[RMDB]
The record gives the reactivity of an RNA of 177 nucleotides to 2A3. Values are in units of 0.01, from 0 to 300, in steps of 10. Conditions: 150 mM KOAc, 10 mM MgCl2 and 150 mM bicine (pH 8.5), 24 C.
RNA sequence: GGGAACGACUCGAGUAGAGUCGAAAACGCCCUGUCACGGUUUCCCUGCGGAGCUGUGCCCGGGGCCCCGACGGAUUCCGGUCCGUCGCAGGGGUGGCCCUCCACCUCGAUACCCGUCCCUCGAGGACCCCGGGCUAACGUUCGCGUUAGCCCGGGGAAAAGAAACAACAACAACAAC
Reactivity to 2A3 in 0.01 (KOAc 150mM, MgCl2 10mM, bicine 150mM(pH8.5), 24C), signal-to-noise 1, nucleotides 027 to 126: c050g020c000c000c000u000g010u010c000a010c010g010g050u020u050u070c080c080c070u160g010c240g050g000a000g010c000u000g010u020g000c040c250c000g000g000g000g010c000c000c000c000g000a000c000g000g000a010u040u010c130c190g150g010u000c000c000g010u010c070g020c100a060g010g000g000g020u000g000g030c020c020c010u020c000c020a040c030c030u010c020g000a030u080a180c000c000c040g040u080c050c000c050u010c110g040a140g020g020a040